[RMDB]
RNA sequence: GGGAACGACUCGAGUAGAGUCGAAAACCCGUGCUGCCUUCCACCGGUUAAGACCUCCAAAAUCGAAGGGCUGCCCAGGCAGAGGAUGUCCCCUUGCCACCCUUGGAGGGGCAGCGCUGUGCUGGCCUUAAGAGUCCGGUUUCGACCGGACUCUUAAAAAAGAAACAACAACAACAAC
Reactivity to 2A3 in 0.01 (KOAc 150mM, MgCl2 10mM, bicine 150mM(pH8.5), 24C), signal-to-noise 2, nucleotides 027 to 126: c020c000c000g010u030g000c000u040g000c000c010u030u030c010c000a020c000c040g020g000u030u120a110a030g060a050c010c000u080c010c050a030a120a020a180u190c120g150a160a060g040g030g000c000u010g000c010c010c020a050g030g050c050a060g030a000g130g010a110u170g110u170c000c000c040c010u000u040g080c020c000a070c000c040c000u020u030g060g020a040g040g020g000g000c020a000g000c000g000c000u000g020u010g050c060u010g060g010c000c000
Reactivity to DMS in 0.01 (KOAc 150mM, MgCl2 10mM, bicine 150mM(pH8.5), 24C), signal-to-noise 2, nucleotides 027 to 126: c000c000c060g040u010g010c040u010g000c030c030u000u020c040c030a070c030c070g000g000u060u020a130a140g000a140c000c020u000c010c040a080a060a030a120u050c120g000a130a060g000g010g030c100u020g000c100c010c070a100g020g000c020a070g020a120g000g010a100u020g000u020c080c000c000c020u010u030g000c040c030a120c040c020c050u000u050g060g020a060g020g010g000g010c010a040g000c000g000c020u000g020u040g010c010u000g000g000c070c040